This 177-nucleotide RNA was probed chemically with 2A3 and DMS.
[RMDB]
RNA sequence: GGGAACGACUCGAGUAGAGUCGAAAAGUUGUGCCUCACCCCUUCAAACCAGGAGACUCCGUCUGGGUUCGGAGACAUCAAACCAAGAACCUCGAGCCACGGUGGAAGGGACCACAUAUCGUCCUCCGGUACGCUAAAACUUCGGUUUUAGCGUACCAAAAGAAACAACAACAACAAC
Reactivity to 2A3 in 0.01 (KOAc 150mM, MgCl2 10mM, bicine 150mM(pH8.5), 24C), signal-to-noise 3, nucleotides 027 to 126: g040u010u030g000u030g030c010c010u140c030a110c000c040c020c000u010u000c060a130a190a160c100c020a020g020g000a070g060a140c070u100c070c050g170u130c070u080g020g010g080u010u010c010g000g030a050g070a080c050a060u280c060a050a080a090c050c020a080a030g000a000a030c010c000u020c100g040a010g050c030c010a050c040g000g000u020g000g000a030a050g000g010g000a010c000c010a010c000a010u160a060u130c090g080u020c010c020u060c050c070
Reactivity to DMS in 0.01 (KOAc 150mM, MgCl2 10mM, bicine 150mM(pH8.5), 24C), signal-to-noise 2, nucleotides 027 to 126: g060u000u000g020u000g000c130c000u080c070a080c080c000c000c010u080u010c000a040a070a100c010c000a160g000g030a080g000a090c010u000c000c100g000u050c080u070g000g000g050u000u000c000g000g000a110g000a100c180a150u050c170a020a050a110c100c170a080a160g020a000a000c030c030u040c040g000a040g000c010c030a080c090g000g000u000g000g000a000a000g000g000g000a080c170c000a060c050a030u060a100u000c110g020u000c000c020u000c160c220
DMS adducts were read by reverse transcription with MarathonRT.